[RMDB]
RNA sequence: GGGAACGACUCGAGUAGAGUCGAAAAUGGGAAGGUUAAACUCUAGAACUGUCACAGUGGUAGCCUUGAGCUGUGAUGGAUUUUAAAGGCUACUGAUAUCCAAAGCCUGCCCAUGGGCGUUGGGUUGAGGGAAUUUUUAAAACAUGGGCUGCACCCGGUACCAUAUCUCCUUCGGGAGAUAUGGUACAAAAGAAACAACAACAACAAC
Reactivity to 2A3 in 0.01 (KOAc 150mM, MgCl2 10mM, bicine 150mM(pH8.5), 24C), signal-to-noise 3, nucleotides 027 to 156: u130g020g000g020a030a030g030g010u090u130a100a140a060c030u000c050u090a060g040a150a090c060u020g000u000c010a000c000a000g000u000g020g030u000a000g000c000c010u000u000g000a000g010c010u000g000u010g020a010u010g030g070a060u060u070u140u300a030a010a000g000g000c000u000a010c000u010g010a010u000a000u020c000c000a000a000a010g000c000c010u010g000c020c010c000a000u000g000g000g000c010g000u000u000g000g000g000u000u020g000a030g020g030g100a010a010u180u070u040u100u210a010a010a000a000c000a000u000g000g010g000c000u000g000c000a010c000c040c030g060